RNA sequence: GGGAACGACUCGAGUAGAGUCGAAAAGGGCGUUCGCGCCCAGUUAAGCGUACUACAACCGAAGUGAGCGUUGAAAUAUCGAACUACCGAGUCCCAAAUAGGACUCGGCGAUAUGGAGCUCAUUAGGUUGUAUCGCAAGUAGACCCUUCGGGGUCAAUGCUAAGACAAGAUUCGUCUUGUCUUAGCAAAAAGAAACAACAACAACAAC
Reactivity to DMS in 0.01 (KOAc 150mM, MgCl2 10mM, bicine 150mM(pH8.5), 24C), signal-to-noise 3, nucleotides 027 to 156: g000g020g020c010g060u000u010c220g070c010g050c000c000c010a020g030u000u000a080a190g020c020g040u000a060c090u000a030c000a020a030c060c010g010a300a300g000u000g000a010g010c000g020u000u000g020a180a110a030u000a030u000c020g020a170a190c030u010a130c000c000g000a030g010u000c000c000c010a080a170a280u010a040g000g010a010c010u000c000g000g000c010g000a010u000a010u000g020g000a300g000c000u000c000a010u000u010a300g010g020u000u000g000u000a000u000c010g030c020a060a140g010u000a140g000a030c000c010c000u030u000c300g030g040g000g010u000c000a010a100
Reactivity to 2A3 in 0.01 (KOAc 150mM, MgCl2 10mM, bicine 150mM(pH8.5), 24C), signal-to-noise 2, nucleotides 027 to 156: g070g000g000c070g030u080u160c240g000c000g040c090c000c000a000g000u020u130a140a030g020c010g020u070a050c030u010a010c020a000a020c020c000g040a050a040g010u000g000a000g020c020g050u140u080g020a010a060a000u000a000u000c020g030a050a050c040u070a060c300c000g000a000g000u030c000c020c020a210a250a090u300a110g000g000a000c000u050c020g000g000c000g000a000u000a000u000g000g050a000g000c000u060c020a000u100u000a000g000g000u000u000g010u010a000u000c000g030c000a000a010g030u080a070g000a000c020c000c070u000u040c200g050g000g000g000u000c000a000a020